[RMDB]
RNA sequence: GGGAACGACUCGAGUAGAGUCGAAAAAGCGAGUUGAACGACUCGGUGCAACGGCAGGAAAUGGAAACGGCGAAUCGGGACGCGCCGCAGAAUCGUAUUACGACGACGAACGCCGCUGGUGUGGUGGCCGUGGAUAUUGACGCCGAUGGCAACACGCCUAGGCAGACGCUUUCGAGCGUCUGCCUAGAAAAGAAACAACAACAACAAC
Reactivity to 2A3 in 0.01 (KOAc 150mM, MgCl2 10mM, bicine 150mM(pH8.5), 24C), signal-to-noise 1, nucleotides 027 to 156: a010g230c050g010a040g000u060u080g150a080a080c120g030a040c060u010c070g000g030u120g000c020a050a000c030g040g000c060a140g150g100a000a050a050u180g000g050a090a000a000c030g000g000c070g030a110a030u170c000g000g000g020a040c020g000c000g000c000c000g000c010a000g030a010a040u040c030g000u060a030u180u220a040c100g110a130c060g000a000c000g000a070a000c050g020c030c010g000c050u060g010g010u150g010u070g030g070u070g100g000c000c000g000u030g000g030a030u080a100u110u150g060a020c050g000c010c000g000a020u150g000g010c030a060a060c080a110c080g020c010